[RMDB]
RNA sequence: GGGAACGACUCGAGUAGAGUCGAAAAACAGAAGGGUGAAAGUUCAAGCAAGCUAGCCGGUAAAAAAGCAAACUUGACCACCAAGGAUAAAAGAGAUCUUAUCCAAGGAUGCAAAAGAUAAUCUCACAAAAGCUUCAUUCGUUCGCGAAUGAAGCAACAAAACCGUAUAGUUCGCUAUACGGUUUUGAAAAGAAACAACAACAACAAC
Reactivity to 2A3 in 0.01 (KOAc 150mM, MgCl2 10mM, bicine 150mM(pH8.5), 24C), signal-to-noise 4, nucleotides 027 to 156: a010c030a020g080a070a050g050g020g010u050g030a200a080a030g020u130u060c020a020a010g000c020a080a000g000c020u030a020g040c040c060g040g020u130a060a050a070a080a040a010g020c020a060a050a030c030u030u030g030a040c010c010a010c020c010a020a030g040g000a030u020a080a070a050a010g090a010g010a010u010c020u050u030a000u010c010c010a030a020g060g000a030u090g040c040a040a040a040a010g010a010u100a110a070u080c030u030c070a070c050a100a110a010a040g000c000u000u000c000a000u000u000c000g030u040u090c220g000c010g140a000a000u000g000a000a000g000c000a000a000
Reactivity to DMS in 0.01 (KOAc 150mM, MgCl2 10mM, bicine 150mM(pH8.5), 24C), signal-to-noise 2, nucleotides 027 to 156: a090c020a060g000a100a060g010g010g000u000g010a120a050a130g010u000u000c030a040a060g040c050a020a210g040c020u030a300g010c030c030g000g000u000a000a040a040a120a120a040g010c010a050a130a070c050u000u020g000a120c140c020a160c020c020a010a300g000g020a050u010a020a020a020a070g010a250g000a130u000c040u000u000a010u000c020c010a040a270g000g000a080u010g020c100a060a090a090a030g040a080u000a030a050u000c030u010c050a120c080a080a080a050a160g000c000u000u000c020a030u000u000c020g000u010u010c300g020c010g000a030a010u010g050a000a000g000c000a010a010

Description
An RNA of 207 nucleotides, treated with 2A3 and DMS and read out base by base. 2A3 adducts were read by reverse transcription with SuperScript II with manganese. Reactivities are given for positions 27 through 156. The reactions ran in a buffer of 150 mM KOAc, 10 mM MgCl2 and 150 mM bicine (pH 8.5), at 24 C. It was measured as part of the RMDB library M2RFPK.